Chemical mapping of a 177-nucleotide RNA with DMS and 2A3. For DMS, 1,792 sequencing reads were counted. Values cover nucleotides 27 to 126. DMS adducts were read by reverse transcription with MarathonRT.
RNA sequence: GGGAACGACUCGAGUAGAGUCGAAAAGCGGGAGUGCCUAUGCAGCGUUACGAACAUCGCGCCGAUCUGCCGUGCGGGUCGACGAUCGGGCCGUUGGCCGCGGCGCGCACCGGAAUCCCCACGGUCGGUCGGUAAAUCACUUCGGUGAUUUACCGACAAAAGAAACAACAACAACAAC
Reactivity to DMS in 0.01 (KOAc 150mM, MgCl2 10mM, bicine 150mM(pH8.5), 24C), signal-to-noise 3, nucleotides 027 to 126: g000c070g010g030g000a120g010u020g000c050c040u000a080u000g010c080a100g030c070g000u000u000a070c100g010a150a070c140a080u010c090g010c120g010c010c000g000a050u000c080u000g030c000c030g010u010g000c160g010g010g010u000c040g030a290c120g010a070u010c030g010g010g010c000c010g010u000u000g010g010c060c250g000c040g000g000c010g010c020g010c150a040c030c010g020g000a120a170u010c010c000c000c020a060c040g000g010u000c150g010
Reactivity to 2A3 in 0.01 (KOAc 150mM, MgCl2 10mM, bicine 150mM(pH8.5), 24C), signal-to-noise 2, nucleotides 027 to 126: g070c070g020g000g040a070g040u120g070c040c020u110a090u160g080c080a020g010c020g030u110u090a050c070g040a100a000c010a080u070c050g000c000g010c040c020g030a080u040c010u050g000c010c000g040u070g030c110g030g020g110u020c020g030a080c020g000a090u070c020g010g100g000c010c000g050u060u070g050g020c010c030g020c010g030g000c050g060c000g030c010a020c040c000g000g010a030a040u040c000c020c000c030a020c030g060g040u050c050g010